This 177-nucleotide RNA was probed chemically with DMS and 2A3. The DMS profile rests on 5,566 reads.
RNA sequence: GGGAACGACUCGAGUAGAGUCGAAAACACUAUUGGUUCGCCAAUAGUGAAACGGCAAGCCGAAGCCGAACGGCAAGCCGAAGCCGAACGCCAACGGCAAAAAAACUGCGUUCUUCGGAACGCAGAACUAUUAUUCGAAGUUCGCUUCGAAUAAUAGAAAAGAAACAACAACAACAAC
Reactivity to DMS in 0.01 (KOAc 150mM, MgCl2 10mM, bicine 150mM(pH8.5), 24C), signal-to-noise 5, nucleotides 027 to 126: c010a000c000u010a010u000u010g000g000u000u030c280g020c000c010a010a000u000a010g000u010g000a040a040a110c010g010g010c010a040a300g020c010c000g010a120a230g010c090c120g000a080a140c020g000g000c010a040a300g000c010c020g000a060a060g000c010c000g000a110a080c130g020c040c040a100a090c010g000g010c020a000a000a070a070a030a100a080c000u010g000c000g010u000u000c000u000u010c150g010g000a000a010c000g000c000a000g000a020a110
Reactivity to 2A3 in 0.01 (KOAc 150mM, MgCl2 10mM, bicine 150mM(pH8.5), 24C), signal-to-noise 2, nucleotides 027 to 126: c000a000c000u000a010u000u010g030g010u040u040c120g030c070c000a000a010u000a000g010u000g020a040a010a010c020g000g000c010a030a020g010c010c010g030a060a020g120c050c040g020a080a020c010g000g000c020a010a010g020c000c000g000a040a010g020c010c000g040a140a040c030g090c050c010a010a010c000g000g020c000a120a000a060a000a000a010a020c010u000g000c010g020u010u010c000u030u050c170g090g000a010a000c000g000c000a000g000a000a000

The 2A3 profile rests on 12,631 reads.
Conditions: 150 mM KOAc, 10 mM MgCl2 and 150 mM bicine (pH 8.5), 24 C.